Structure probing data (DMS and 2A3) for a 177-nucleotide construct. The RNA was probed in 150 mM KOAc, 10 mM MgCl2 and 150 mM bicine (pH 8.5) at 24 C. For 2A3, 2,440 sequencing reads were counted. For 2A3 the reverse transcriptase was SuperScript II with manganese.
RNA sequence: GGGAACGACUCGAGUAGAGUCGAAAAUAGCAUGCUAUAUACGGCGCGCAUUAGCAUGCAUGCCGGCAUCGGCAUCGUAGCUAGCUACGUAGCAUUAUAUAAUGCGCCGAUCGUAGCUAUACGAUCGUGCGCGCACGGAGUUCGCUCCGUGCGCGCAAAAAGAAACAACAACAACAAC
Reactivity to DMS in 0.01 (KOAc 150mM, MgCl2 10mM, bicine 150mM(pH8.5), 24C), signal-to-noise 2, nucleotides 027 to 126: u020a070g010c010a010u000g000c030u000a030u010a090u010a080c080g000g010c000g040c030g020c200a090u000u000a020g000c000a000u000g020c020a070u000g020c000c000g010g030c300a160u000c010g020g010c010a050u000c030g020u000a010g000c090u000a090g010c000u000a000c000g010u000a070g000c080a090u000u000a080u010a090u010a060a100u000g000c000g040c100c050g010a030u000c000g010u000a000g000c170u010a060u000a010c010g000a010u010c110g010
Reactivity to 2A3 in 0.01 (KOAc 150mM, MgCl2 10mM, bicine 150mM(pH8.5), 24C), signal-to-noise 2, nucleotides 027 to 126: u060a000g000c000a000u010g020c000u030a040u020a000u050a270c050g110g000c030g000c020g000c060a030u050u000a010g010c000a000u010g000c010a000u020g000c030c000g190g080c170a260u300c040g020g000c000a010u020c020g000u000a010g080c040u050a000g050c010u010a010c000g020u030a020g010c030a020u160u060a100u050a040u040a240a090u080g020c020g050c020c000g000a020u040c000g000u000a000g040c130u100a080u000a210c000g000a010u000c100g040